Notes:
Structure probing data (DMS) for a 177-nucleotide construct.
[RMDB]
RNA sequence: GGGAACGACUCGAGUAGAGUCGAAAAGAUAUGGAGUGUUUGUCAGGAACGAGAGAGCGAUGAAAGCGACGUCGGAAACGACGUCGCUGGAGCUCUCAAGUUCCUUGGAUUUAACACUCCUAAGUCAUCUGAUAACUUGGUUCGCCAAGUUAUCAGAAAAAGAAACAACAACAACAAC
Reactivity to DMS in 0.01 (KOAc 150mM, MgCl2 10mM, bicine 150mM(pH8.5), 24C), signal-to-noise 1, nucleotides 027 to 126: g010a020u000a300u020g000g010a040g030u010g030u010u000u000g010u000c010a010g020g020a020a010c010g000a300g000a020g010a000g000c000g030a020u000g000a160a230a010g000c020g010a000c000g030u020c000g020g010a090a060a210c030g030a040c000g030u000c010g020c000u000g020g000a090g010c000u010c000u000c000a020a240g010u000u000c000c010u000u000g040g000a020u010u040u000a000a020c040a020c000u000c000c000u010a020a080g000u000c050a140
The DMS profile rests on 1,128 reads. Values cover nucleotides 27 to 126. DMS adducts were read by reverse transcription with MarathonRT.